[RMDB]
RNA sequence: GGGAACGACUCGAGUAGAGUCGAAAAGUAGGGGUUAGUGCUAAUGGUUUAACAGUAGGGGACCAUGGACAACUGUAGACAUCACUAUCCAGUAGAACAUUUUGUGGCUGGGCGCGGUGGCUCACGCCCUUAGAAUGUUAUUCGUAACAUUCUAAGGAAAAGAAACAACAACAACAAC
Reactivity to 2A3 in 0.01 (KOAc 150mM, MgCl2 10mM, bicine 150mM(pH8.5), 24C), signal-to-noise 9, nucleotides 027 to 126: g090u080a030g020g040g020g010u050u070a040g020u050g080c040u080a100a060u060g050g050u040u060u110a160a060c050a050g090u110a060g020g020g010g020a010c020c020a030u050g030g020a020c030a070a010c070u040g020u070a010g020a030c010a030u050c010a020c030u040a060u050c010c020a010g030u040a030g060a110a020c040a060u120u120u090u240g060u050g050g000c020u020g010g010g000c030g000c020g050g030u040g030g000c000u010c010a030c050g040c000
Reactivity to DMS in 0.01 (KOAc 150mM, MgCl2 10mM, bicine 150mM(pH8.5), 24C), signal-to-noise 9, nucleotides 027 to 126: g020u000a080g010g000g010g010u000u000a050g020u000g010c150u010a070a070u000g010g010u000u000u010a080a090c080a080g010u000a080g010g010g000g010a080c070c070a050u000g000g010a080c100a070a070c070u000g010u000a050g010a060c060a040u000c040a040c040u000a080u000c030c020a060g010u000a070g010a070a080c080a110u000u000u010u010g030u000g010g010c030u000g000g000g010c140g010c090g000g020u000g010g000c030u000c050a070c140g000c100
An RNA of 177 nucleotides, treated with 2A3 and DMS and read out base by base. In probing experiments dimethyl sulfate is read out at A N1 and C N3, which are open when not base-paired. The reactions ran in a buffer of 150 mM KOAc, 10 mM MgCl2 and 150 mM bicine (pH 8.5), at 24 C. Values are in units of 0.01, from 0 to 300, in steps of 10. Reactivities are given for positions 27 through 126. 2A3 adducts were read by reverse transcription with SuperScript II with manganese. For 2A3, 65,064 sequencing reads were counted.